[RMDB]
RNA sequence: GGGAACGACUCGAGUAGAGUCGAAAAAUUGAUGAUAGACUAAGAAAAUUAGGGUUUUUUAUUUUUGGUUUUUGAUAAAGAGAAAGAUGCCUCUUCUUUCAGCAGCAAGAUUAUUCUUGUUAGCUUUUCAAACAGUGUAUUUCGAUACACUGUUUGAAAAAGAAACAACAACAACAAC
Reactivity to 2A3 in 0.01 (KOAc 150mM, MgCl2 10mM, bicine 150mM(pH8.5), 24C), signal-to-noise 1, nucleotides 027 to 126: a000u010u070g060a080u060g160a130u050a080g090a070c070u080a220a000g060a060a070a100a010u230u210a080g030g040g000u090u000u000u000u040u030a140u100u170u030u110u080g020g020u070u020u000u060u150g100a090u210a160a000a000g030a000g030a000a030a000g030a020u060g090c000c000u130c040u000u000c010u000u070u000c020a000g000c010a000g000c000a050a020g010a010u080u080a050u300u050c010u000u020g000u000u010a050g010c000u040u000u000